[RMDB]
Overview:
The record gives the reactivity of an RNA of 177 nucleotides to DMS and 2A3. For DMS, 19,549 sequencing reads were counted.
RNA sequence: GGGAACGACUCGAGUAGAGUCGAAAAGUCCCCACUUUCGAGUGGGGACAAUCAAAGUUUUGGCACUCGCAGCCCGCAGCGUUGGUGCUCCCACGCGGAGCAUAACUGCCUACUUCGGUAGGCAGAACAAUGCAUAAUUGUUCGCAAUUAUGCAUUGAAAAGAAACAACAACAACAAC
Reactivity to DMS in 0.01 (KOAc 150mM, MgCl2 10mM, bicine 150mM(pH8.5), 24C), signal-to-noise 9, nucleotides 027 to 126: g000u000c000c000c000c010a000c000u000u000u010c150g010a010g030u000g000g000g010g010a000c000a010a040u010c110a080a100a130g000u000u000u000u000g010g010c040a080c050u000c060g010c070a130g000c020c010c040g010c110a060g010c070g010u000u000g010g020u000g010c010u000c000c000c010a120c260g010c120g010g000a020g000c020a010u000a020a170c010u000g000c000c000u000a010c000u000u010c150g030g010u010a000g000g000c000a000g010a060a150
Reactivity to 2A3 in 0.01 (KOAc 150mM, MgCl2 10mM, bicine 150mM(pH8.5), 24C), signal-to-noise 7, nucleotides 027 to 126: g000u000c000c000c000c010a010c020u090u110u090c270g140a000g000u010g010g000g000g010a000c010a000a010u080c020a010a040a080g030u040u080u160u160g070g010c030a020c060u030c030g030c040a020g030c020c030c030g030c050a060g020c040g060u110u140g090g020u040g000c010u010c010c000c000a260c130g030c260g020g010a000g000c000a010u030a110a080c000u000g000c000c000u010a010c010u020u040c080g070g000u000a000g000g000c000a000g000a000a000

For DMS the reverse transcriptase was MarathonRT.